[RMDB]
RNA sequence: GGGAACGACUCGAGUAGAGUCGAAAACACUGAAUCUCAACUAACACAUAACAAUUUCAUAUUUCUUAUUGUGAGAAGUUGAGGGACUUGGCCCUGUGAUACUUCAGCAACCGACUUUAUAGCACGGCGCACACGACACUUUCGAGUGUCGUGUGCGAAAAGAAACAACAACAACAAC
Reactivity to 2A3 in 0.01 (KOAc 150mM, MgCl2 10mM, bicine 150mM(pH8.5), 24C), signal-to-noise 2, nucleotides 027 to 126: c100a030c040u030g010a030a100u000c060u000c020a000a000c000u030a000a000c000a000c010a020u050a040a040c040a090a120u050u180u240c180a100u150a250u180u120u000c130u090u010a090u140u170g000u000g030a020g000a010a010g000u000u000g000a000g010g020g000a000c000u140u210g060g000c000c010c050u000g000u010g030a040u020a210c190u080u110c040a040g020c040a110a060c010c000g080a060c190u050u100u040a190u110a230g000c050a030c050g030g010
Structure probing data (2A3) for a 177-nucleotide construct. The reactions ran in a buffer of 150 mM KOAc, 10 mM MgCl2 and 150 mM bicine (pH 8.5), at 24 C.